This 177-nucleotide RNA was probed chemically with DMS and 2A3.
RNA sequence: GGGAACGACUCGAGUAGAGUCGAAAAGAUAUGGACCGGGUAGGGAGGCUGCUCGGAAACGAGAAAGCCGAGGAUCUACACGGUCCUAAGUCAAACUCAACUGGAGCGUUCGCGCUCCAGUUGAGAACGAAAAGAUAUCGUUCGCGAUAUCUUUUCGAAAAGAAACAACAACAACAAC
Reactivity to DMS in 0.01 (KOAc 150mM, MgCl2 10mM, bicine 150mM(pH8.5), 24C), signal-to-noise 3, nucleotides 027 to 126: g000a030u000a300u000g000g000a000c000c000g010g000g010u000a010g000g000g010a030g010g020c010u000g010c000u000c000g000g000a020a050a100c000g010a010g000a060a100a020g020c010c000g000a080g020g010a030u010c000u000a010c020a010c000g000g000u000c000c000u010a000a040g000u010c040a130a110a200c000u000c000a000a000c000u000g020g000a010g010c010g000u000u020c210g030c010g020c000u000c000c000a000g010u000u000g000a000g010a040a070
Reactivity to 2A3 in 0.01 (KOAc 150mM, MgCl2 10mM, bicine 150mM(pH8.5), 24C), signal-to-noise 3, nucleotides 027 to 126: g030a010u070a040u170g000g000a000c010c010g000g020g010u010a000g000g020g040a010g010g000c010u030g010c000u000c000g020g030a030a040a010c020g000a000g010a300a300a000g010c020c010g040a150g030g010a030u000c000u010a010c000a000c010g010g000u000c010c000u000a010a000g000u000c020a010a030a110c000u010c000a000a000c000u010g010g000a000g000c000g020u130u110c280g020c010g000c090u000c000c000a000g000u010u010g000a000g000a000a000
Annotation: For 2A3 the reverse transcriptase was SuperScript II with manganese. The reactions ran in a buffer of 150 mM KOAc, 10 mM MgCl2 and 150 mM bicine (pH 8.5), at 24 C.